The record gives the reactivity of an RNA of 207 nucleotides to 2A3.
2A3 adducts were read by reverse transcription with SuperScript II with manganese.
RNA sequence: GGGAACGACUCGAGUAGAGUCGAAAACGAAGUUAUCAUCACCGACCAGGAGCCGUCAGUCGACGUCCGCGCGGCUUUGGAAGGAUCCAAUGUGCAGCUUAGAGUGGCAUCGCAGGAGAGGAAGUGAAUAUGGCCAACGAUCCUUCGGUAGAUGCCGACUCAGAUUUGACUUCGGUCAAAUCUGAGUAAAAGAAACAACAACAACAAC
Reactivity to 2A3 in 0.01 (KOAc 150mM, MgCl2 10mM, bicine 150mM(pH8.5), 24C), signal-to-noise 1, nucleotides 027 to 156: c050g020a040a000g080u140u070a090u160c130a030u050c050a030c060c020g000a040c000c010a030g040g100a010g000c000c000g040u080c080a170g040u050c060g080a110c080g110u110c100c020g000c010g000c000g000g000c000u040u020u040g010g000a080a050g000g000a040u050c010c040a050a050u100g030u040g060c060a020g010c020u040u090a020g000a060g110u230g010g000c000a000u040c020g020c040a000g060g030a040g030a010g070g000a100a030g020u090g140a050a100u220a140u200g140g000c070c030a070a000c030g020a050u070c010c040u000u020c000g010g040u050a070g010a000u050g010c020c000g000